[RMDB]
RNA sequence: GGGAACGACUCGAGUAGAGUCGAAAACCGCUACUCUUCGGAGUAGCGGAUACAUCUCGGGUCCGGGCCUUACCCUAGGACCAACGGUAAGGCCAGAGAUGAAGGGAGAGAUUUUCGAAUCUCUCAAUAACAUUAGCGCGUUCGCGCGCUAAUGUUAAAAAGAAACAACAACAACAAC
Reactivity to DMS in 0.01 (KOAc 150mM, MgCl2 10mM, bicine 150mM(pH8.5), 24C), signal-to-noise 1, nucleotides 027 to 126: c000c000g010c000u000a000c010u000c000u000u010c180g030g000a020g030u000a000g020c000g000g020a040u000a050c010a020u000c010u000c000g000g010g020u030c060c070g000g000g020c010c000u000u020a010c010c010c150u000a110g000g030a120c150c230a020a080c300g020g010u000a000a000g000g000c000c000a020g000a010g010a010u000g030a170a100g000g010g000a020g000a010g000a030u000u000u010u030c140g020a060a010u000c000u010c010u000c000a090a060
Conditions: 150 mM KOAc, 10 mM MgCl2 and 150 mM bicine (pH 8.5), 24 C. Chemical mapping of a 177-nucleotide RNA with DMS. DMS adducts were read by reverse transcription with MarathonRT. In probing experiments dimethyl sulfate is read out at A N1 and C N3, which are open when not base-paired. For DMS, 870 sequencing reads were counted.